This 177-nucleotide RNA was probed chemically with 2A3 and DMS. Values cover nucleotides 27 to 126.
[RMDB]
RNA sequence: GGGAACGACUCGAGUAGAGUCGAAAAACGUUUGGGAUUCUUCUUGGUGAUGGAUGAUGCCUAGACCAGCCCCAGACACCCUCCCAAGCCUAAGCACCCCUCUCCUGUUCUGACAACCCCAUCCCACAGAGAAUCAGUACUUCGGUACUGAUUCUCUAAAAGAAACAACAACAACAAC
Reactivity to 2A3 in 0.01 (KOAc 150mM, MgCl2 10mM, bicine 150mM(pH8.5), 24C), signal-to-noise 4, nucleotides 027 to 126: a000c100g010u060u060u020g060g020g020a110u100u100c060u090u010c030u040u070g040g040u080g080a100u100g080g070a050u090g060a050u190g160c010c010u040a030g050a080c000c010a000g010c000c010c010c000a010g010a010c000a020c000c000c000u020c000c000c000a040a010g000c000c030u070a060a010g010c010a050c000c030c000c000u010c000u020c000c000u020g040u050u000c020u020g010a040c040a020a080c000c010c000c000a010u010c020c020c000a040c030
Reactivity to DMS in 0.01 (KOAc 150mM, MgCl2 10mM, bicine 150mM(pH8.5), 24C), signal-to-noise 2, nucleotides 027 to 126: a060c180g020u020u010u040g000g040g000a180u010u020c110u060u000c120u000u000g010g050u040g000a180u010g020g000a120u010g020a090u050g000c030c030u000a120g010a110c030c090a070g000c190c000c030c020a050g000a050c030a120c030c020c020u010c070c030c020a060a150g000c020c020u010a020a180g020c060a050c010c000c000c010u030c010u000c040c030u000g000u010u000c050u000g010a090c100a140a050c060c030c020c020a090u000c030c000c020a110c170